Chemical mapping of a 177-nucleotide RNA with 2A3 and DMS. For 2A3, 5,164 sequencing reads were counted. For DMS the reverse transcriptase was MarathonRT. It was measured as part of the RMDB library OK2TST.
[RMDB]
RNA sequence: GGGAACGACUCGAGUAGAGUCGAAAAGGGUGCGAGGAUGACCGCGUCUCCCUUGGGCUCUGGAGUCUGCGGUGGGAAGGGCUUGGUUUCAGCACCCUCUGGUCAGAGGCCGGCCGAGCCCAUGGGCAGCAUACAUCUCAUUCGUGAGAUGUAUGCUAAAAGAAACAACAACAACAAC
Reactivity to 2A3 in 0.01 (KOAc 150mM, MgCl2 10mM, bicine 150mM(pH8.5), 24C), signal-to-noise 3, nucleotides 027 to 126: g030g030g000u050g020c050g040a080g110g060a170u200g130a130c030c000g000c030g030u000c050u030c030c010c000u030u060g090g020g000c050u020c070u070g040g000a020g030u000c060u190g010c000g050g040u090g050g030g050a120a160g050g000g000c010u010u020g010g070u040u130u210c050a020g000c020a080c020c020c000u000c010u010g010g000u030c010a030g040a030g110g000c050c000g000g010c000c020g000a010g000c010c000c000a010u030g020g020g040c040
Reactivity to DMS in 0.01 (KOAc 150mM, MgCl2 10mM, bicine 150mM(pH8.5), 24C), signal-to-noise 3, nucleotides 027 to 126: g000g000g020u000g020c070g010a140g000g000a190u010g000a110c000c000g010c010g010u000c040u000c000c010c100u010u010g020g020g000c030u000c060u000g000g010a020g000u000c010u010g020c040g000g000u020g000g000g000a230a090g010g010g000c000u000u010g010g010u000u000u010c050a100g030c110a090c220c030c010u010c010u010g010g020u010c120a090g010a040g000g000c130c070g010g010c010c000g000a000g000c000c000c010a060u000g000g010g000c180